[RMDB]
RNA sequence: GGGAACGACUCGAGUAGAGUCGAAAAUGGACGACCCACGCAAUGCGACGGACGAACAGAUCGUCAAGGCAGCAAACGACACGGUUCCCGGCGUUCUGCCGCUCUUCUGGGCGUUCCGCAUCAUGGACAUCAGCUGCACUUUCGAGUGCAGCUGAUGAAAAGAAACAACAACAACAAC
Reactivity to DMS in 0.01 (KOAc 150mM, MgCl2 10mM, bicine 150mM(pH8.5), 24C), signal-to-noise 2, nucleotides 027 to 126: u010g030g010a130c080g010a220c040c000c020a170c190g000c110a140a030u020g000c100g030a260c120g000g000a000c010g000a040a050c040a070g010a040u000c050g030u000c200a200a110g010g000c000a030g020c230a020a030a020c010g000a040c020a110c170g000g040u000u010c010c010c000g030g010c020g000u000u000c040u010g000c000c020g000c060u000c030u000u000c040u000g010g010g030c000g000u010u000c040c020g020c020a050u000c100a060u000g060g000a270
Reactivity to 2A3 in 0.01 (KOAc 150mM, MgCl2 10mM, bicine 150mM(pH8.5), 24C), signal-to-noise 1, nucleotides 027 to 126: u080g120g030a000c030g100a120c030c000c010a000c030g110c040a100a040u060g020c010g060a080c100g060g000a010c000g020a030a000c040a080g050a030u080c010g140u120c190a050a060g010g000c050a000g000c020a200a000a000c020g190a060c080a050c150g080g000u040u000c040c010c000g000g000c000g040u000u020c020u010g040c070c000g030c040u060c000u050u000c010u000g010g030g000c010g030u000u000c040c000g000c000a020u110c040a080u080g030g070a000

Description:
This 177-nucleotide RNA was probed chemically with DMS and 2A3. For 2A3 the reverse transcriptase was SuperScript II with manganese. For DMS, 1,257 sequencing reads were counted. The 2A3 profile rests on 1,047 reads.